The record gives the reactivity of an RNA of 177 nucleotides to DMS and 2A3.
[RMDB]
RNA sequence: GGGAACGACUCGAGUAGAGUCGAAAAGAUAUGGAGUGUAGAGGACGUCACUGAUGACCUCGGAAACGAGCAAGGUGGCGUCUACCCACCUACACUCCUAAGUCAAACUCAGGGUUCGCCCUGAGAACAUCCCCCACUAGUUCGCUAGUGGGGGAUGAAAAGAAACAACAACAACAAC
Reactivity to DMS in 0.01 (KOAc 150mM, MgCl2 10mM, bicine 150mM(pH8.5), 24C), signal-to-noise 2, nucleotides 027 to 126: g020a050u020a300u010g000g020a000g070u010g000u000a030g030a200g000g030a010c000g030u010c000a010c030u000g000a060u050g010a070c300c010u000c000g000g000a110a040a200c020g000a000g010c070a050a130g000g010u010g000g000c010g010u000c050u000a010c050c050c070a300c110c040u000a010c000a020c030u000c000c000u000a010a020g000u000c010a100a100a220c000u020c010a000g000g000g010u000u010c170g000c020c000c010u010g000a010g010a070a100
Reactivity to 2A3 in 0.01 (KOAc 150mM, MgCl2 10mM, bicine 150mM(pH8.5), 24C), signal-to-noise 1, nucleotides 027 to 126: g000a040u130a150u300g000g020a030g030u030g000u000a000g040a000g000g010a000c000g020u060c000a010c010u100g070a270u180g020a280c040c000u010c000g000g010a030a060a030c030g030a010g020c030a040a200g000g020u000g000g010c000g000u010c000u020a020c010c010c010a020c000c000u000a010c000a010c000u060c000c010u000a050a020g000u020c060a100a020a080c010u000c000a000g020g040g020u060u100c260g120c010c000c000u000g010a000g000a010a010
Record summary:
It was measured as part of the RMDB library TTRDEL. The reactions ran in a buffer of 150 mM KOAc, 10 mM MgCl2 and 150 mM bicine (pH 8.5), at 24 C.